Source information
Chemical mapping of a 177-nucleotide RNA with DMS and 2A3. DMS (dimethyl sulfate) methylates the pairing face of unpaired adenines and cytosines.
RNA sequence: GGGAACGACUCGAGUAGAGUCGAAAAUGCUGCGCGAGAUCGACUCGGCGCAGUCGGCCGCGUGCUUCGGCGCGACGCUCGCGGGCGACGAGCCGUUCUUGCGCGAUCACCGGAUCGACGGCCGGCAAAAAUAUAGCAUCUUCGGAUGCUAUAUUUUAAAAGAAACAACAACAACAAC
Reactivity to DMS in 0.01 (KOAc 150mM, MgCl2 10mM, bicine 150mM(pH8.5), 24C), signal-to-noise 7, nucleotides 027 to 126: u000g010c130u000g020c010g010c010g000a010g000a050u000c020g010a030c010u000c010g010g010c020g020c030a090g010u000c050g010g010c250c040g010c020g030u000g010c030u000u010c140g030g020c030g010c020g000a100c070g010c030u000c060g010c060g010g010g010c010g000a040c010g000a020g020c000c000g010u000u000c000u000u000g020c010g010c000g000a040u010c090a150c030c020g010g010a070u000c060g000a110c120g010g000c010c010g010g000c190a020
Reactivity to 2A3 in 0.01 (KOAc 150mM, MgCl2 10mM, bicine 150mM(pH8.5), 24C), signal-to-noise 4, nucleotides 027 to 126: u110g010c090u050g010c010g000c000g020a020g000a020u030c020g030a030c020u010c020g010g040c020g000c020a000g040u020c010g000g030c000c030g000c020g000u010g010c000u050u070c180g190g020c060g020c050g090a150c010g000c020u060c030g000c020g050g190g030c000g000a010c000g000a010g000c000c000g010u020u000c000u010u010g000c000g000c000g000a020u020c010a010c020c020g000g040a080u130c090g150a130c070g110g010c020c000g020g000c040a040
The 2A3 profile rests on 8,492 reads.